Conditions: 150 mM KOAc, 10 mM MgCl2 and 150 mM bicine (pH 8.5), 24 C. Structure probing data (2A3 and DMS) for a 177-nucleotide construct. DMS adducts were read by reverse transcription with MarathonRT. High 2A3 reactivity points to a flexible backbone, as in loops and unpaired stretches. For 2A3, 22,483 sequencing reads were counted. The data come from the RNA Mapping Database (RMDB), library OK1LIB.
[RMDB]
RNA sequence: GGGAACGACUCGAGUAGAGUCGAAAAUGCAGGUCCGUCGGGAAGGGGUGCUCGCGCAGCCACACCGUCAUGUGCGGGCCCGGCAUCGUCGCGAUCACGAGCUGCUGCGCGGGGUUCAUGUACACCGGCUAUAUAAAUUAUUCGUAAUUUAUAUAGCAAAAGAAACAACAACAACAAC
Reactivity to 2A3 in 0.01 (KOAc 150mM, MgCl2 10mM, bicine 150mM(pH8.5), 24C), signal-to-noise 8, nucleotides 027 to 126: u110g010c020a010g020g040u020c020c020g040u050c040g040g020g070a090a080g060g020g000g030u060g040c010u010c020g020c010g000c020a000g030c020c010a060c010a020c040c010g070u080c060a130u210g090u140g050c000g000g010g000c000c000c000g030g000c020a070u050c030g100u060c030g010c040g070a070u090c030a010c060g020a020g020c050u050g000c000u010g010c030g000c020g020g000g000g000u070u100c060a050u120g030u090a030c030a030c040c040g030
Reactivity to DMS in 0.01 (KOAc 150mM, MgCl2 10mM, bicine 150mM(pH8.5), 24C), signal-to-noise 7, nucleotides 027 to 126: u030g010c080a110g000g010u020c010c040g020u020c050g010g010g000a080a070g010g000g010g010u000g010c020u000c020g030c060g000c020a050g000c030c110a090c090a130c040c050g020u010c060a070u010g020u040g000c010g000g000g000c050c030c040g000g000c030a040u010c070g010u010c040g010c060g010a070u010c070a070c060g000a060g010c060u010g000c020u000g000c040g010c020g000g000g000g010u000u010c080a070u010g010u010a050c060a090c040c060g000